[RMDB]
This 177-nucleotide RNA was probed chemically with 2A3 and DMS. The data come from the RNA Mapping Database (RMDB), library M2PK90. For DMS, 4,428 sequencing reads were counted. The RNA was probed in 150 mM KOAc, 10 mM MgCl2 and 150 mM bicine (pH 8.5) at 24 C. For 2A3 the reverse transcriptase was SuperScript II with manganese.
RNA sequence: GGGAACGACUCGAGUAGAGUCGAAAAAAAGUUAGCGUACUAGAGUCGCCGUGAGUACGCUAUGGUUCCGUGAGACUCUACUCGAGCGUAUCACGGAACCCUCGUACAUACCGUACGUGCUAUAAAAAUAGACUAUAGCUUUCGAGCUAUAGUCUAUAAAAGAAACAACAACAACAAC
Reactivity to 2A3 in 0.01 (KOAc 150mM, MgCl2 10mM, bicine 150mM(pH8.5), 24C), signal-to-noise 2, nucleotides 027 to 126: a000a010a000g080u020u010a010g010c000g010u000a000c000u020a040g120a150g130u160c080g040c120c010g130u100g040a010g010u000a000c010g000c000u010a010u030g030g000u050u020c030c010g000u020g020a050g010a000c000u000c020u010a000c000u010c000g000a000g020c000g000u010a030u040c010a010c010g020g000a020a040c000c000c000u020c000g000u010a010c010a060u170a210c040c090g000u000a000c020g010u010g040c060u110a100u100a260a090a010a020
Reactivity to DMS in 0.01 (KOAc 150mM, MgCl2 10mM, bicine 150mM(pH8.5), 24C), signal-to-noise 4, nucleotides 027 to 126: a050a040a060g000u000u000a010g020c010g010u000a000c000u000a140g010a140g000u000c030g010c040c040g020u010g010a030g020u000a000c000g010c020u000a010u000g010g000u000u000c020c030g030u000g000a240g010a020c010u000c010u000a010c030u000c020g000a010g000c060g000u020a050u000c030a070c030g000g000a050a040c020c020c010u010c010g020u000a010c010a090u000a090c300c160g000u000a010c000g010u000g000c120u010a090u010a020a060a050a070